[RMDB]
RNA sequence: GGGAACGACUCGAGUAGAGUCGAAAAGGAGCUCGGCAAGCUCUUAAUCGUAGGUAGAGCUUGCGUUCGCUCUACCUUACCACCGGAGCGAACUCUAGGGUCGGUGGUAUCGUGACUCUAGAGUUAGGGCACGAUACGAUAUUGCUCUAACCGAGCAGCUAAAUAUCCAGUUCGCUGGAUAUUUAGCAAAAGAAACAACAACAACAAC
Reactivity to 2A3 in 0.01 (KOAc 150mM, MgCl2 10mM, bicine 150mM(pH8.5), 24C), signal-to-noise 6, nucleotides 027 to 156: g120g020a080g000c000u000c010g010g010c050a050a040g010c020u000c040u020u050a070a050u050c020g030u020a020g030g020u010a000g010a000g000c020u110u140g070c110g100u100u050c010g000c000u000c000u000a010c000c000u010u050a010c010c010a020c010c030g000g010a010g010c020g020a050a040c040u030c050u110a060g020g020g010u030c030g000g050u080g050g030u050a050u050c020g020u030g080a140c000u000c000u010a030g020a020g220u080u020a000g010g000g010c010a000c010g020a010u050a030c020g010a020u040a080u080u060g000c000u010c000u020a040a020c010c000g000a000g000c010a000
Reactivity to DMS in 0.01 (KOAc 150mM, MgCl2 10mM, bicine 150mM(pH8.5), 24C), signal-to-noise 2, nucleotides 027 to 156: g010g000a150g020c000u000c010g050g000c030a110a240g010c000u000c020u010u000a040a100u010c080g040u000a070g030g000u000a030g000a030g000c020u010u000g020c130g010u000u000c130g000c000u000c000u000a030c020c030u000u010a030c060c050a090c060c040g010g000a020g000c000g000a050a090c040u010c060u000a120g010g010g020u000c030g030g010u000g010g010u000a010u000c040g000u000g010a130c000u000c010u010a030g000a110g020u010u000a030g010g000g010c030a060c040g000a090u000a060c040g000a100u000a150u000u000g000c010u000c020u010a120a080c010c020g000a060g030c020a110
This 207-nucleotide RNA was probed chemically with 2A3 and DMS. 2A3 adducts were read by reverse transcription with SuperScript II with manganese. Reactivities are rounded to 0.1 and cut off at 0 and 3. For DMS the reverse transcriptase was MarathonRT. Source: RMDB library OK3TST, as collected in RNAgym. Values cover nucleotides 27 to 156. The RNA was probed in 150 mM KOAc, 10 mM MgCl2 and 150 mM bicine (pH 8.5) at 24 C.